[RMDB]
Chemical mapping of a 177-nucleotide RNA with DMS and 2A3.
Source: RMDB library TTRDES, as collected in RNAgym.
High DMS reactivity at an A or C suggests that its Watson-Crick edge is free.

RNA sequence: GGGAACGACUCGAGUAGAGUCGAAAAGAUAUGGAUUGCCCAUGGGAGAAGUGGGUCGGAAACGACCCAAACUUCGAAGAACAUGAGCGCAAUCCUAAGUCAAAACGUACUGCUUCGGCAGUACGAAGGAUGAAUGAAUGUUCGCAUUCAUUCAUCCAAAAGAAACAACAACAACAAC
Reactivity to DMS in 0.01 (KOAc 150mM, MgCl2 10mM, bicine 150mM(pH8.5), 24C), signal-to-noise 3, nucleotides 027 to 126: g020a020u000a170u010g000g000a030u000u010g000c010c030c010a020u010g000g010g000a090g000a000a000g070u010g000g030g020u000c010g020g000a040a040a120c000g000a010c010c010c000a020a040a060c010u000u000c000g000a140a190g030a180a160c010a030u010g010a130g010c210g030c050a050a020u000c000c010u000a010a130g000u000c020a110a070a110a240c010g010u000a000c000u000g010c000u000u020c240g020g000c010a020g010u000a000c000g000a070a070
Reactivity to 2A3 in 0.01 (KOAc 150mM, MgCl2 10mM, bicine 150mM(pH8.5), 24C), signal-to-noise 2, nucleotides 027 to 126: g010a000u040a030u090g000g000a000u000u000g000c010c030c000a000u010g080g030g000a300g000a030a000g010u040g030g000g000u010c010g000g000a000a010a000c000g000a020c000c000c000a000a030a030c000u010u000c030g080a090a040g030a050a010c000a010u050g040a090g190c110g010c140a000a020u000c010c000u020a060a000g020u010c030a020a070a050a110c010g000u020a000c000u000g060c000u040u080c300g170g000c000a000g000u000a010c000g000a040a030
Annotation:
For 2A3 the reverse transcriptase was SuperScript II with manganese.